[RMDB]
RNA sequence: GGGAACGACUCGAGUAGAGUCGAAAAGGGUUGUAGUUCGCUACAACCCAAAGAAAUGAGCAAGGACCAGCUCAAUAAAGGUCCAAAAAGUACGAAAGUACAAAAUCGUGAAGUUCGCUUCACGAAACUAUCGAAAUUAGUUCGCUAAUUUCGAUAGAAAAGAAACAACAACAACAAC
Reactivity to 2A3 in 0.01 (KOAc 150mM, MgCl2 10mM, bicine 150mM(pH8.5), 24C), signal-to-noise 3, nucleotides 027 to 126: g000g010g000u010u000g000u010a010g010u020u040c160g010c090u000a000c000a000a000c000c000c010a000a010a000g000a000a030a060u300g000a000g000c020a070a140g020g000a000c000c010a010g010c000u000c020a000a000u070a000a010a000g000g010u000c000c000a000a040a090a080a000g010u010a000c010g060a270a060a010g000u000a000c000a030a040a020a130u040c000g000u000g000a010a010g010u050u120c190g030c100u000u000c010a000c010g000a030a000a000
Reactivity to DMS in 0.01 (KOAc 150mM, MgCl2 10mM, bicine 150mM(pH8.5), 24C), signal-to-noise 4, nucleotides 027 to 126: g010g010g020u000u000g020u000a000g020u000u010c230g040c020u000a000c000a000a000c000c000c000a010a040a070g000a120a120a080u010g000a000g010c010a060a170g010g000a010c000c020a100g010c000u000c010a080a140u010a020a040a090g020g010u000c000c000a050a030a050a070a070g000u010a000c000g000a090a060a110g000u000a000c000a130a040a070a090u000c010g010u000g000a010a010g010u000u010c230g010c010u000u000c000a000c000g000a010a030a140